[RMDB]
RNA sequence: GGGAACGACUCGAGUAGAGUCGAAAAUGUGACCUCAUGCAAGUUAACCUCUUUGAGCCAAGUCUCCUUAAAAAUGGGGCUGAGACCAGGUGCAGUGGCUCACGCCUAUAAUCCUAACACUUUGGGAGAGACGUAGGAUAUUCGUAUCCUACGUCUCAAAAGAAACAACAACAACAAC
Reactivity to 2A3 in 0.01 (KOAc 150mM, MgCl2 10mM, bicine 150mM(pH8.5), 24C), signal-to-noise 3, nucleotides 027 to 126: u160g020u030g030a020c010c010u050c050a090u080g020c020a030a070g070u070u110a080a080c020c000u040c030u090u090u160g020a020g010c000c020a030a010g030u020c020u050c040c000u140u150a080a100a050a030a100u150g020g010g020g000c000u020g040a040g020a060c020c030a030g000g050u050g020c030a040g000u010g030g030c010u010c000a020c010g030c000c000u110a130u110a140a090u030c020c000u060a130a010c090a070c160u060u130u110g040g020g010a100
Reactivity to DMS in 0.01 (KOAc 150mM, MgCl2 10mM, bicine 150mM(pH8.5), 24C), signal-to-noise 3, nucleotides 027 to 126: u010g020u010g010a110c030c010u000c040a060u000g000c050a080a060g010u000u000a080a120c060c020u000c070u000u010u010g020a100g010c050c040a080a040g000u000c020u000c010c050u020u010a020a070a070a120a100u000g020g000g000g020c020u000g000a080g010a080c050c080a080g000g010u000g000c190a050g040u000g010g000c050u000c040a020c130g010c020c010u000a090u010a060a100u000c030c000u000a010a060c170a060c140u000u000u000g010g000g000a180